[RMDB]
RNA sequence: GGGAACGACUCGAGUAGAGUCGAAAAUCGGCAGUUCGCUGCCGAAAAAACCGUAGGGCUUCUCCGAUUGUCAGCUUGGUUGUUUCGAAAGAGACAGAGAGAGCUUGGAUUUAUCGGAGGAAGCCCUAAACGGAAAAAAGGGCUAUUCGUAGCCCAAGAUACAAACGAUAUUCGUAUCGUUUGUAUCAAAAGAAACAACAACAACAAC
Reactivity to DMS in 0.01 (KOAc 150mM, MgCl2 10mM, bicine 150mM(pH8.5), 24C), signal-to-noise 1, nucleotides 027 to 156: u000c000g020g040c000a010g050u000u030c300g050c020u000g050c000c000g010a020a000a040a070a060a040c000c010g030u000a020g030g020g010c020u010u000c020u010c010c000g000a050u000u020g000u010c010a070g000c040u020u010g030g050u000u000g010u000u020u010c000g020a180a110a250g010a080g050a050c000a020g030a120g010a190g000a010g000c010u030u000g010g040a080u000u000u000a020u020c000g020g010a010g020g000a060a000g000c000c000c000u010a000a010a040c020g000g000a010a040a080a090a060a150g000g010g000c000u000a070u000u000c140g010u000a030g010c000c000c000a010a030
This 207-nucleotide RNA was probed chemically with DMS.
DMS adducts were read by reverse transcription with MarathonRT.
Reactivities are given for positions 27 through 156.